[RMDB]
RNA sequence: GGGAACGACUCGAGUAGAGUCGAAAAUAAGCGUAUUCCAUGGAAAGUUAUCGUCCCACAUUUCGGAAAUUAUAUUCCGAGCCAGCAAGAAAAUCUUCUCUGUUACAAUUUGACAUAGCUAAAAACUACCGCAAUAAAUAUUCGUAUUUAUUGCGGUAAAAGAAACAACAACAACAAC
Reactivity to 2A3 in 0.01 (KOAc 150mM, MgCl2 10mM, bicine 150mM(pH8.5), 24C), signal-to-noise 6, nucleotides 027 to 126: u190a030a020g050c030g030u040a100u050u030c020c020a010u060g030g070a090a070a030g020u090u080a080u130c060g030u020c010c020c000a060c030a060u070u110u030c010g000g160a010a030a010u280u150a130u110a120u170u000c000c000g000a000g010c010c020a010g000c030a070a050g030a120a150a080a100u040c050u090u020c040u010c000u020g050u050u060a070c060a130a190u060u060u160g040a030c040a040u130a050g030c060u150a040a030a040a070a050c030u000
Reactivity to DMS in 0.01 (KOAc 150mM, MgCl2 10mM, bicine 150mM(pH8.5), 24C), signal-to-noise 3, nucleotides 027 to 126: u030a050a140g030c050g020u000a030u000u000c040c010a090u010g000g040a030a150a050g030u000u000a040u000c060g000u010c030c070c010a110c190a090u000u010u000c020g010g000a020a030a090u010u050a110u010a210u020u010c000c000g010a050g020c190c030a050g000c120a080a030g000a050a060a190a100u010c090u020u000c020u000c030u000g000u000u000a030c130a070a040u010u000u010g040a070c040a050u040a060g030c090u030a050a080a160a080a070c190u000